[RMDB]
RNA sequence: GGGAACGACUCGAGUAGAGUCGAAAAGACGCGAGAGACGCGAGACGCGCAAUGGCAGAAGCCGCAAUAGAUUAUACGACGCAAGAGGCAAGACGGAGAGCGCGCAGCUUGCGUAAAUAACCAAGAAAAUUAGUCGACGUUUCGACGUCGACUAAUUAAAAGAAACAACAACAACAAC
Reactivity to DMS in 0.01 (KOAc 150mM, MgCl2 10mM, bicine 150mM(pH8.5), 24C), signal-to-noise 1, nucleotides 027 to 126: g000a110c050g000c010g030a090g080a190g000a020c040g030c030g000a170g050a200c010g000c010g030c070a040a020u000g020g030c010a140g000a140a090g040c010c050g000c300a130a050u110a020g000a200u000u000a080u010a220c050g010a100c040g000c020a000a090g020a040g000g010c000a010a110g000a090c020g000g170a220g000a100g000c010g040c250g000c110a080g010c000u000u000g000c000g000u000a000a000a000u000a000a160c030c050a000a000g000a060a000
Reactivity to 2A3 in 0.01 (KOAc 150mM, MgCl2 10mM, bicine 150mM(pH8.5), 24C), signal-to-noise 2, nucleotides 027 to 126: g040a000c000g000c000g000a000g000a000g020a140c000g000c010g010a040g020a030c030g050c000g000c000a050a200u060g000g000c000a000g080a080a050g020c030c000g000c000a000a070u090a090g000a000u070u060a000u070a100c120g040a000c010g030c030a030a020g060a000g010g030c030a110a080g030a000c000g040g040a110g040a000g030c000g010c000g000c030a010g010c000u000u000g060c000g040u050a000a010a010u070a020a000c110c140a020a020g160a060a040